Chemical mapping of a 207-nucleotide RNA with 2A3. 2A3 adducts were read by reverse transcription with SuperScript II with manganese. Values cover nucleotides 27 to 156.
RNA sequence: GGGAACGACUCGAGUAGAGUCGAAAAGCCAUCGCCCGCGUGGCGUUCGAGGGGCUCAUAUGAAGCGGGCUACGCCCAAAUCCGCCGCCUGAGGAUGAGGGAAGAGACGAACCAGGCUAGCCGCCGGGAGGCCUGUCGGUAGGCGGAACGGACGGCGGUGGGUAAAUAGCUUCGGCUAUUUACCCACAAAAGAAACAACAACAACAAC
Reactivity to 2A3 in 0.01 (KOAc 150mM, MgCl2 10mM, bicine 150mM(pH8.5), 24C), signal-to-noise 2, nucleotides 027 to 156: g000c000c000a010u020c080g000c000c000c010g000c000g010u000g000g010c020g020u020u090c150g040a200g020g020g040g000c030u060c080a110u240a050u300g140a080a010g000c000g000g010g010c000u000a000c000g010c000c000c020a000a050a000u000c000c000g000c000c020g000c000c010u010g000a010g010g000a000u000g010a010g000g050g000a000a000g000a000g030a010c180g020a040a030c030c000a000g000g000c000u010a000g000c000c000g000c000c000g010g000g000a050g030g030c000c000u130g180u200c120g080g130u200a010g000g000c000g000g000a020a010c000g010g030a140c000g000g020c010g000